About this RNA:
This 177-nucleotide RNA was probed chemically with 2A3 and DMS. For 2A3, 2,099 sequencing reads were counted. Conditions: 150 mM KOAc, 10 mM MgCl2 and 150 mM bicine (pH 8.5), 24 C. Reactivities are given for positions 27 through 126. Source: RMDB library OK2TST, as collected in RNAgym.
RNA sequence: GGGAACGACUCGAGUAGAGUCGAAAAAAAUUAUCAUUGUUGACAAUGAUGGAAGACAAGGCGACCACAGAAGAGCUACAGACAAUGCAAAGAUAUGUUAUAAUGGAAGGCUUUGUUUCCCUUCCAGAAAAGGAUAUACUUUCGAGUAUAUCCUUUUAAAAGAAACAACAACAACAAC
Reactivity to 2A3 in 0.01 (KOAc 150mM, MgCl2 10mM, bicine 150mM(pH8.5), 24C), signal-to-noise 2, nucleotides 027 to 126: a000a010a000u170u050a040u030c020a010u000u020g050u070u120g060a080c000a030a010u020g040a030u030g010g040a100a020g070a010c010a060a020g000g010c020g000a020c030c010a010c010a050g110a150a000g010a040g070c040u040a030c010a060g080a030c030a080a040u090g060c010a130a040a000g040a070u080a040u200g050u110u080a140u120a250a100u140g020g000a010a000g000g010c040u050u030u020g000u000u000u030c000c000c030u010u010c020c000a010g060
Reactivity to DMS in 0.01 (KOAc 150mM, MgCl2 10mM, bicine 150mM(pH8.5), 24C), signal-to-noise 6, nucleotides 027 to 126: a030a060a060u010u010a030u000c020a030u000u000g010u010u010g010a140c040a030a030u000g000a030u000g010g010a070a060g010a070c070a040a080g000g020c060g010a110c060c030a040c070a070g010a090a050g000a090g010c050u000a050c090a050g000a050c070a040a040u000g020c090a050a060a070g000a090u000a030u000g000u000u000a090u010a110a090u010g000g000a010a010g000g000c090u000u000u000g000u000u000u000c060c000c000u000u000c000c010a050g000